An RNA of 177 nucleotides, treated with DMS and 2A3 and read out base by base. The RNA was probed in 150 mM KOAc, 10 mM MgCl2 and 150 mM bicine (pH 8.5) at 24 C. The data come from the RNA Mapping Database (RMDB), library RFMREP. For DMS, 5,399 sequencing reads were counted. For DMS the reverse transcriptase was MarathonRT.
RNA sequence: GGGAACGACUCGAGUAGAGUCGAAAAAAACUGGGAACACACGACCGCAAAUCUGACGCGUCGCGCAGGUGUCACAGACACUUUCGGCCUCUUUCGCCGUGCGCGACUUGGGAUUGCGGACGUGUAACUCUUAAAUACCGUUCGCGGUAUUUAAGAGAAAAGAAACAACAACAACAAC
Reactivity to DMS in 0.01 (KOAc 150mM, MgCl2 10mM, bicine 150mM(pH8.5), 24C), signal-to-noise 5, nucleotides 027 to 126: a050a050a080c070u010g010g000g000a120a060c150a050c020a010c000g010a090c000c010g010c010a020a040a060u000c010u010g010a210c030g020c250g000u000c000g010c000g020c010a090g020g010u000g000u010c010a120c260a150g020a030c010a030c020u000u000u000c040g010g000c010c160u010c240u000u010u000c230g010c000c000g020u010g010c010g000c000g010a010c000u000u010g000g000g000a010u000u000g010c000g000g010a020c000g010u000g000u000a040a090
Reactivity to 2A3 in 0.01 (KOAc 150mM, MgCl2 10mM, bicine 150mM(pH8.5), 24C), signal-to-noise 4, nucleotides 027 to 126: a000a000a000c150u140g010g010g060a150a010c030a000c000a000c080g020a030c000c000g000c010a050a100a170u000c000u020g010a020c070g030c080g200u000c000g000c000g000c000a000g020g040u010g010u000c060a150c070a300g020a010c000a000c000u080u120u080c020g000g020c010c020u210c130u130u230u160c090g000c010c010g010u000g000c010g000c000g000a000c000u010u050g000g010g000a000u000u000g000c010g000g010a000c000g000u000g000u000a000a000